The record gives the reactivity of an RNA of 177 nucleotides to DMS and 2A3.
DMS (dimethyl sulfate) methylates the pairing face of unpaired adenines and cytosines.
The 2A3 profile rests on 18,189 reads.
Reactivities are given for positions 27 through 126.
As a SHAPE reagent, 2A3 marks flexible, mostly unpaired nucleotides at the ribose 2'-OH.

RNA sequence: GGGAACGACUCGAGUAGAGUCGAAAAGGUCGGUGUUUCGACACCGACCACUUACCGAGAAUGUUCCUCGGUAUAUAAAACUAACCCUUGGAAACAAGGGAAUACGAAUCGUGUUCGCACGAUUCAAAGUACACAUGGAAUUCGUUCCAUGUGUACUAAAAGAAACAACAACAACAAC
Reactivity to DMS in 0.01 (KOAc 150mM, MgCl2 10mM, bicine 150mM(pH8.5), 24C), signal-to-noise 7, nucleotides 027 to 126: g010g020u000c000g020g020u000g010u000u000u020c170g020a050c010a010c010c000g010a010c000c000a000c070u000u000a010c010c000g000a010g000a160a170u000g010u000u010c060c000u000c010g000g000u000a010u010a070u010a050a050a070a100c210u000a100a160c000c000c000u000u000g000g000a210a100a170c000a000a010g000g010g010a060a020u000a080c150g000a010a000u000c000g010u000g000u000u010c190g010c000a010c000g010a010u000u000c000a060a060
Reactivity to 2A3 in 0.01 (KOAc 150mM, MgCl2 10mM, bicine 150mM(pH8.5), 24C), signal-to-noise 6, nucleotides 027 to 126: g000g000u000c000g000g010u020g020u010u080u130c180g030a000c000a000c000c000g000a000c000c000a000c000u010u020a000c010c000g010a000g030a070a180u230g040u120u090c010c000u000c010g000g060u010a020u000a010u020a110a060a010a010c050u050a040a100c000c000c000u000u000g010g010a050a040a010c000a000a000g000g000g030a020a010u070a030c040g000a000a000u000c000g010u000g040u050u070c240g000c070a000c010g000a000u010u000c000a000a000